RNA sequence: GGGAACGACUCGAGUAGAGUCGAAAAGGAUUACUUGGUCUUGAGCUCCCGAUAGGUGAGCUCGGCUUGAGGGCCUAGUAGCCAGCGGCGUCAUAUUCCUGAUCCCUUUACCGAUUUGGCCGUCGGCGUAAGCAAUGGGAUUCGUCCCAUUGCUUACAAAAGAAACAACAACAACAAC
Reactivity to DMS in 0.01 (KOAc 150mM, MgCl2 10mM, bicine 150mM(pH8.5), 24C), signal-to-noise 7, nucleotides 027 to 126: g000g010a030u020u000a020c030u000u000g000g010u010c000u010u020g010a010g010c010u010c000c010c020g000a180u050a090g000g030u030g000a010g010c000u000c000g010g010c130u010u020g030a060g000g000g000c000c000u000a060g020u000a080g010c020c020a130g010c090g000g000c020g020u010c080a090u020a090u010u000c010c000u000g000a110u000c020c010c010u010u020u020a110c040c040g000a060u000u020u000g010g000c030c080g000u000c010g000g020c300
Reactivity to 2A3 in 0.01 (KOAc 150mM, MgCl2 10mM, bicine 150mM(pH8.5), 24C), signal-to-noise 9, nucleotides 027 to 126: g030g010a070u050u040a050c010u040u050g020g010u020c030u110u270g000a000g000c000u000c000c020c010g150a300u210a230g030g030u200g060a000g000c000u000c000g000g050c020u080u170g080a140g000g020g010c000c000u010a010g010u020a010g020c010c020a040g040c040g020g010c000g090u170c050a050u050a090u150u050c000c000u010g030a060u040c010c000c000u010u100u060a080c020c010g020a040u050u010u110g030g000c010c000g010u010c010g000g030c030
Conditions: 150 mM KOAc, 10 mM MgCl2 and 150 mM bicine (pH 8.5), 24 C.
An RNA of 177 nucleotides, treated with DMS and 2A3 and read out base by base.
Reactivities are given for positions 27 through 126.
In probing experiments dimethyl sulfate is read out at A N1 and C N3, which are open when not base-paired.
For 2A3 the reverse transcriptase was SuperScript II with manganese.
For DMS the reverse transcriptase was MarathonRT.